[RMDB]
RNA sequence: GGGAACGACUCGAGUAGAGUCGAAAAGAACUCACUCGGUGUUCUCACCGAAAGCACGUAAUCGCUGGUGUAACUCAUGUUGGCUGGGGGGCCUCCUGGCGCGCUGCGAACUGGGGUGCGCCCCUAAUGUCGCAAUAAUUUUCGAAUUAUUGCGACAAAAAGAAACAACAACAACAAC
Reactivity to DMS in 0.01 (KOAc 150mM, MgCl2 10mM, bicine 150mM(pH8.5), 24C), signal-to-noise 2, nucleotides 027 to 126: g000a100a020c020u010c000a080c010u010c020g000g000u000g000u000u000c020u020c010a100c120c070g020a100a040a060g010c030a050c070g010u030a100a060u020c070g030c050u010g010g000u000g000u020a060a090c090u010c090a040u020g020u000u000g000g010c060u010g030g000g000g000g010g000c010c010u010c010c000u010g000g030c040g020c040g000c110u010g020c040g040a130a110c050u020g000g000g000g000u000g030c060g000c020c000c020c020u000a020a070
Reactivity to 2A3 in 0.01 (KOAc 150mM, MgCl2 10mM, bicine 150mM(pH8.5), 24C), signal-to-noise 3, nucleotides 027 to 126: g020a050a030c000u000c010a010c000u000c030g000g030u020g010u010u000c030u040c010a020c020c030g130a110a050a000g070c080a040c050g080u240a050a120u140c120g000c010u020g010g070u030g020u090a090a080c040u020c130a080u040g030u020u020g050g000c040u060g030g000g000g010g020g000c010c000u020c000c010u000g060g000c010g020c010g120c060u150g000c000g040a120a080c030u060g000g000g020g000u040g020c060g210c000c010c000c010u000a080a020